[RMDB]
RNA sequence: GGGAACGACUCGAGUAGAGUCGAAAAUCAGUUGGAAUGAAAGUUAGGCACAUGUUCGUGACGAAAAACGGAGCAGAUCACUUUCACAACUCUACAGAUCAUGUAUUCAGUCAGGAACAUAACUAUACUCAGCCUAAUACUUCGGUAUUAGGCUGAGAAAAGAAACAACAACAACAAC
Reactivity to DMS in 0.01 (KOAc 150mM, MgCl2 10mM, bicine 150mM(pH8.5), 24C), signal-to-noise 2, nucleotides 027 to 126: u000c020a040g000u010u010g000g020a070a120u020g020a130a050a030g010u010u020a070g020g010c210a080c200a020u000g000u000u020c040g000u000g000a040c080g010a060a040a060a120a090c170g040g000a080g000c020a030g010a030u000c050a030c190u010u000u020c090a120c080a030a060c080u000c160u010a050c120a080g020a040u000c050a100u000g020u000a110u000u000c080a110g000u010c020a040g000g010a020a010c010a030u000a070a160c030u000a000u010a070
Reactivity to 2A3 in 0.01 (KOAc 150mM, MgCl2 10mM, bicine 150mM(pH8.5), 24C), signal-to-noise 1, nucleotides 027 to 126: u120c010a030g050u020u120g040g060a120a120u050g090a140a080a000g040u060u050a080g080g000c040a100c080a070u030g000u060u000c140g080u010g050a020c040g090a160a080a000a080a000c080g000g010a050g120c040a020g000a000u020c000a010c010u050u200u200c050a050c020a190a100c030u020c030u080a050c030a040g050a100u000c040a150u020g020u070a300u020u080c020a030g020u010c000a020g080g080a010a000c000a000u000a020a020c020u010a000u040a180

The record gives the reactivity of an RNA of 177 nucleotides to DMS and 2A3. Values cover nucleotides 27 to 126. The data come from the RNA Mapping Database (RMDB), library OK2TST. For 2A3 the reverse transcriptase was SuperScript II with manganese.